RNA sequence: GGGAACGACUCGAGUAGAGUCGAAAAUUAUUGAGAGAAGCCAUAUAGUGGGACCUGAUUACAAAACAGAACACAUCAGAUGAUUCAACAUGGUCAGAGGAAUUAACAUUACGAAUCUGAUCGUUUAGGUAAAAACAGUAACCUUCUCCUUUGAUCAAGCAUAUGAAAAUUUCGAUUUUCAUAUGCUAAAAGAAACAACAACAACAAC
Reactivity to DMS in 0.01 (KOAc 150mM, MgCl2 10mM, bicine 150mM(pH8.5), 24C), signal-to-noise 3, nucleotides 027 to 156: u020u000a090u000u020g030a190g010a150g030a080a150g030c080c050a060u000a120u010a070g030u000g020g030g020a080c040c030u000g000a080u020u010a300c060a050a100a100a230c100a100g020a090a090c060a050c070a150u000c050a110g000a220u000g010a120u010u000c060a070a090c080a070u010g080g020u010c010a010g000a030g010g010a090a050u000u030a060a110c130a090u010u000a110c050g020a190a160u010c040u010g010a030u010c030g010u000u000u000a040g020g030u000a040a030a070a050a050c060a120g010u000a050a070c040c020u000u000c040u000c000c010u010u000u000g010a040u000c040a080
Reactivity to 2A3 in 0.01 (KOAc 150mM, MgCl2 10mM, bicine 150mM(pH8.5), 24C), signal-to-noise 4, nucleotides 027 to 156: u120u060a030u070u130g030a090g000a010g010a060a010g010c030c050a040u080a010u030a180g060u080g020g010g020a030c000c010u030g040a050u020u080a060c080a040a110a100a010c050a040g090a070a030c060a010c010a100u060c010a010g050a090u040g010a060u130u110c050a050a050c040a100u110g000g000u000c010a010g010a010g010g050a030a030u130u080a160a060c070a180u080u210a040c020g010a060a040u030c040u050g010a030u010c010g010u040u090u070a050g000g020u060a060a090a010a060a040c040a030g030u040a020a060c010c000u040u010c020u000c010c020u040u080u040g030a040u070c030a030
Structure probing data (DMS and 2A3) for a 207-nucleotide construct. For DMS, 4,502 sequencing reads were counted. 2A3 adducts were read by reverse transcription with SuperScript II with manganese. The reactions ran in a buffer of 150 mM KOAc, 10 mM MgCl2 and 150 mM bicine (pH 8.5), at 24 C. DMS adducts were read by reverse transcription with MarathonRT.